RNA sequence: GGGAACGACUCGAGUAGAGUCGAAAAUGGUGGAGAUCAGCCGGGCUUCCGCAUCGGACAGGUUGCGAGUAUCCACCUGUGCCGCUCGUAAUGCCGCUUGUGUAGACCGUGCGGCCGUGGCCGUGUUUCGCAUGGCCGACGCGGCUGCGGAUAGCCGUCUUCCUUUACCAUUCGUGGUAAAGGAAGAAAAAGAAACAACAACAACAAC
Reactivity to 2A3 in 0.01 (KOAc 150mM, MgCl2 10mM, bicine 150mM(pH8.5), 24C), signal-to-noise 4, nucleotides 027 to 156: u110g020g010u010g020g000a070g020a110u110c070a030g080c070c040g060g050g000c050u070u030c020c020g030c050a100u160c110g050g010a010c030a060g020g040u080u070g040c060g020a040g040u110a080u060c010c000a000c000c000u000g040u060g030c000c000g000c020u020c030g040u070a080a080u130g030c010c000g090c140u170u170g090u080g040u190a040g020a100c030c030g000u010g000c000g000g000c000c000g000u030g000g000c000c010g020u020g020u030u190u030c060g000c070a110u160g090g000c090c000g000a010c000g000c000g000g000c020u000g000c000g000g000a060u100a030g020c020c010g010
Reactivity to DMS in 0.01 (KOAc 150mM, MgCl2 10mM, bicine 150mM(pH8.5), 24C), signal-to-noise 2, nucleotides 027 to 156: u000g010g030u000g000g040a100g010a110u000c040a150g020c040c020g030g040g020c020u000u000c030c020g030c050a110u010c040g030g010a080c040a050g010g010u000u000g020c040g000a140g010u000a120u000c010c030a060c020c000u000g020u000g020c040c080g010c040u010c030g010u000a040a110u000g000c000c000g050c060u000u000g040u000g050u000a090g020a100c070c010g040u000g000c010g000g030c000c000g010u000g010g020c020c030g030u000g000u000u000u010c070g010c020a150u000g010g030c020c010g000a050c030g010c010g010g030c030u000g010c000g010g020a130u000a080g010c000c020g000